[RMDB]
This 177-nucleotide RNA was probed chemically with 2A3 and DMS. For 2A3 the reverse transcriptase was SuperScript II with manganese. It was measured as part of the RMDB library M2PK50.
RNA sequence: GGGAACGACUCGAGUAGAGUCGAAAACAUUGCAGCUUCGGCUGCAAUGAAUCUCUGGUCUCUACGACUCUACUCGAUAGAGGCUGGAGUAGUCGUUGCCGAUGGCGCCCCAAUUCGUUGGGGCGAACACUAUGUAACAAUUCGUUGUUACAUAGUGAAAAGAAACAACAACAACAAC
Reactivity to 2A3 in 0.01 (KOAc 150mM, MgCl2 10mM, bicine 150mM(pH8.5), 24C), signal-to-noise 9, nucleotides 027 to 126: c000a000u010u010g000c010a000g000c010u080u100c230g190g000c000u000g000c000a000a000u000g000a000a020u030c050u010c040u070g050g020u030c040u010c030u110a090c060g010a000c000u000c000u010a010c000u000c000g000a000u000a000g010a000g020g000c040u060g040g040a040g030u080a010g000u010c000g000u000u010g160c000c000g040a160u150g150g050c010g000c000c000c000c010a010a020u050u050c170g060u080u020g000g000g000g000c000g000a000a000
Reactivity to DMS in 0.01 (KOAc 150mM, MgCl2 10mM, bicine 150mM(pH8.5), 24C), signal-to-noise 2, nucleotides 027 to 126: c010a000u000u000g000c000a010g010c000u000u010c220g030g010c000u000g010c000a000a000u000g000a110a080u010c040u000c030u000g010g010u000c020u000c050u000a140c040g010a030c020u000c020u000a010c020u000c000g010a120u000a030g010a040g000g000c010u000g010g000a040g020u000a030g020u000c000g010u000u000g000c000c000g010a100u010g000g010c010g000c000c000c000c000a010a050u000u010c160g020u000u000g010g000g010g010c000g000a020a050